[RMDB]
RNA sequence: GGGAACGACUCGAGUAGAGUCGAAAACUUUGUUGGUUCUGUCUUCGGACAGAACCAACAAAGAAAAAGAUAGCCCAAGAAAGAGGGCAAUAACCAGAUAUAGCCUGGUGGUUCAGGCAAACGAUAAUCAUCAACGAUUCGUCGUUGAUGAUUAUCGGUGUUACUAGAGAUUCGUCUCUAGUAACACAAAAGAAACAACAACAACAAC
Reactivity to 2A3 in 0.01 (KOAc 150mM, MgCl2 10mM, bicine 150mM(pH8.5), 24C), signal-to-noise 5, nucleotides 027 to 156: c000u000u020u010g000u010u000g000g000u000u020c000u000g020u010c020u040u070c290g050g000a010c010a010g030a000a000c000c000a000a000c000a000a000a000g000a000a000a000a000a010g060a020u110a030g000c000c010c010a030a020g170a050a090a010g130a090g020g000g000c040a010a040u090a040a000c030c030a030g130a110u150a040u100a150g000c000c000u000g000g020u010g010g010u040u070c000a000g000g000c000a040a040a000c010g000a000u000a000a000u000c000a000u000c000a000a000c000g010a010u040u080c170g060u010c000g000u110u000g000a000u000g000a000u000u000a000u000c000g000
Reactivity to DMS in 0.01 (KOAc 150mM, MgCl2 10mM, bicine 150mM(pH8.5), 24C), signal-to-noise 3, nucleotides 027 to 156: c000u000u000u000g010u000u020g000g030u000u010c000u000g020u000c000u010u000c300g040g020a020c000a010g020a010a010c000c000a010a000c020a010a020a020g010a030a050a080a070a150g000a120u000a120g020c010c010c000a080a130g010a120a130a170g010a160g000g020g020c030a090a070u000a070a100c040c010a210g010a140u010a120u010a100g000c040c000u000g020g010u000g030g010u000u000c010a020g000g030c030a070a050a200c020g000a000u000a000a010u000c000a020u000c000a000a000c000g010a030u010u000c300g030u000c000g000u010u000g050a000u000g000a000u000u000a000u010c000g030